[RMDB]
RNA sequence: GGGAACGACUCGAGUAGAGUCGAAAAGUACUAUGCCCGCCUUUAUUGAUGCAUGCUCCACCUCCCACUCCUUAAUAGUUGCUUUGAAGUUUCCUUUCGGUGGGUUCUGCAGCGUCUUUAUCAGAAACUUAUUCUGCUAUUUCGAUAGCAGAAUAAGAAAAGAAACAACAACAACAAC
Reactivity to DMS in 0.01 (KOAc 150mM, MgCl2 10mM, bicine 150mM(pH8.5), 24C), signal-to-noise 5, nucleotides 027 to 126: g010u000a070c080u000a070u010g010c020c000c020g030c120c070u010u000u000a060u000u000g010a040u000g010c030a060u010g010c020u010c020c010a060c030c030u010c030c020c020a120c110u000c050c050u010u000a080a080u010a070g010u000u000g030c050u000u010u000g010a080a180g000u000u000u010c020c020u000u010u000c070g010g000u000g010g020g010u000u010c090u000g010c050a060g010c040g020u000c020u000u000u000a060u010c080a090g000a120a080a110
Reactivity to 2A3 in 0.01 (KOAc 150mM, MgCl2 10mM, bicine 150mM(pH8.5), 24C), signal-to-noise 1, nucleotides 027 to 126: g020u000a040c040u060a060u170g060c000c000c020g060c000c000u170u280u110a160u060u100g040a020u050g010c070a060u070g010c040u020c000c000a010c020c000u000c000c000c020a020c030u040c000c010u090u090a120a030u060a230g070u060u070g060c000u070u040u170g050a050a020g050u010u070u080c010c000u040u080u140c000g000g030u010g000g000g000u060u040c040u040g010c000a010g000c000g050u050c000u030u080u030a120u130c020a040g170a030a060a010